Chemical mapping of a 207-nucleotide RNA with DMS.
RNA sequence: GGGAACGACUCGAGUAGAGUCGAAAAACUACGUUCGCGUAGUCUAGAUCCGUAGGUGUGCGAACGCAAAGGGAGCUGGGUGGUUCGAAAGAGCCACAUAGCGAAGAACUUUGCGGAGGUAUACACCUAAACGGCUUUGAGUGUUUUCGAACACUAACAGCGAUAUACACUUCGGUGUAUAUCGCUGAAAAGAAACAACAACAACAAC
Reactivity to DMS in 0.01 (KOAc 150mM, MgCl2 10mM, bicine 150mM(pH8.5), 24C), signal-to-noise 1, nucleotides 027 to 156: a070c000u000a020c110g040u000u050c220g040c010g060u020a000g010u000c040u000a150g000a100u000c000c050g050u000a030g010g020u010g020u000g050c090g050a050a300c000g000c000a000a010a040g020g000g000a300g040c000u000g020g040g020u000g010g020u010u030c000g000a240a210a170g010a030g000c040c000a030c000a030u000a070g040c020g000a120a180g010a100a190c000u000u000u000g000c020g000g000a020g010g010u000a070u000a000c000a020c000c000u040a000a050a120c020g000g000c140u000u020u000g010a140g020u000g030u000u000u000u000c140g000a090a050c040a160c130u000a120a170
Values cover nucleotides 27 to 156. It was measured as part of the RMDB library RNAMAK. The reactions ran in a buffer of 150 mM KOAc, 10 mM MgCl2 and 150 mM bicine (pH 8.5), at 24 C.